[RMDB]
RNA sequence: GGGAACGACUCGAGUAGAGUCGAAAAUUGUGGUCAAGACCUUGGCGUUGUAUCCAAGGUUGUCAAGGUUCCUAUUGACUUAACAAUGAUUGAGUUUAUGUUAUGGUGUAAGGAUGGACAGGGGAAACACAGGUGAGGAAUUCGUUCCUCACCUGUGAAAAGAAACAACAACAACAAC
Reactivity to 2A3 in 0.01 (KOAc 150mM, MgCl2 10mM, bicine 150mM(pH8.5), 24C), signal-to-noise 1, nucleotides 027 to 126: u020u050g010u010g000g050u040c030a040a060g000a030c000c000u000u020g000g040c000g100u030u080g100u210a090u070c040c020a020a000g000g000u010u050g040u010c000a050a040g000g000u030u100c000c050u040a030u050u030g020a000c000u060u060a060a000c030a100a190u120g050a150u040u150g050a040g190u080u070u050a080u050g090u070u130a070u150g090g000u070g020u050a030a050g050g000a040u050g050g000a010c030a060g090g000g000g000a080a080a000
Reactivity to DMS in 0.01 (KOAc 150mM, MgCl2 10mM, bicine 150mM(pH8.5), 24C), signal-to-noise 4, nucleotides 027 to 126: u000u000g050u010g010g010u000c080a070a060g000a020c000c010u000u000g010g000c180g020u000u000g020u000a130u000c040c040a030a020g000g010u000u000g020u000c130a050a050g010g020u000u000c050c100u000a130u000u010g010a040c000u000u000a070a030c030a040a050u000g000a160u000u000g010a110g010u010u010u000a040u010g010u010u000a070u000g010g030u000g010u000a070a090g000g020a060u010g010g010a050c050a080g000g000g010g000a150a060a130